[RMDB]
RNA sequence: GGGAACGACUCGAGUAGAGUCGAAAACGUGACGCCUUCCAAAAGGCAAUUAACGACGGCGCCAUUCAGGCGAAAAAGGACGAGCUGACUUUUUGGGAUGAUAAAUGCGCACUCAACUCUUGCUACGAUGCGGAAAUUAUUUCGAUAAUUUCCGCAUAAAAGAAACAACAACAACAAC
Reactivity to DMS in 0.01 (KOAc 150mM, MgCl2 10mM, bicine 150mM(pH8.5), 24C), signal-to-noise 4, nucleotides 027 to 126: c100g010u000g000a100c120g000c020c040u010u010c090c080a030a020a070a030g010g000c010a050a020u050u030a060a110c060g000a270c090g020g030c010g010c000c010a090u020u020c140a120g000g020c030g000a000a060a040a160a050g000g000a070c050g000a080g000c080u020g000a080c020u000u000u020u010u000g000g000g020a020u020g000a090u020a050a110a070u010g010c020g000c040a040c050u010c140a050a110c060u000c020u040u020g010c050u000a090c110g000
Reactivity to 2A3 in 0.01 (KOAc 150mM, MgCl2 10mM, bicine 150mM(pH8.5), 24C), signal-to-noise 6, nucleotides 027 to 126: c040g010u030g070a090c070g020c010c000u000u050c060c040a060a050a000a000g000g030c030a030a040u130u090a130a020c040g090a010c010g040g040c000g000c000c020a050u160u210c110a100g000g040c010g040a150a010a010a010a000g090g030a060c020g010a010g010c010u010g120a300c020u020u040u010u030u020g040g000g050a070u120g030a020u150a110a150a030u100g000c000g000c010a020c010u050c020a020a120c030u000c010u070u130g030c010u050a070c050g040